[RMDB]
RNA sequence: GGGAACGACUCGAGUAGAGUCGAAAAUUCAAGAUAAAUUCUACUUGCAGAAAAGAGGAUUAGCGAUGGGGGUCGCGUCUUCGCCGGACUUAGCCAAUCUCUACGGCUGGCAUUUCGAGCGCGCAAGACGUCGCGGUAGAUUCGUCUACCGCGACGUAAAAGAAACAACAACAACAAC
Reactivity to 2A3 in 0.01 (KOAc 150mM, MgCl2 10mM, bicine 150mM(pH8.5), 24C), signal-to-noise 2, nucleotides 027 to 126: u080u050c010a050a000g070a130u230a170a120a040u090u020c010u050a140c000u030u090g070c070a030g090a260a080a040a000g050a060g090g000a010u110u080a030g010c020g150a080u160g030g040g000g050g010u000c010g040c030g000u000c000u020u020c040g020c000c000g000g110a080c010u060u050a000g020c000c000a000a140u020c070u090c020u130a050c050g000g120c010u000g030g030c000a000u000u050u110c130g000a130g010c010g010c030g040c040a010a010g010
Reactivity to DMS in 0.01 (KOAc 150mM, MgCl2 10mM, bicine 150mM(pH8.5), 24C), signal-to-noise 1, nucleotides 027 to 126: u080u030c210a100a100g090a250u060a130a090a040u070u000c110u000a300c000u000u040g010c270a170g000a060a090a090a090g010a110g000g000a000u000u000a090g070c000g000a150u000g000g000g000g000g000u000c040g000c070g100u000c000u050u000c110g000c000c000g000g000a100c120u010u050a190g060c000c060a000a050u000c020u090c210u000a050c140g000g040c000u000g000g000c000a020u010u000u000c040g000a140g050c080g050c150g000c020a000a040g000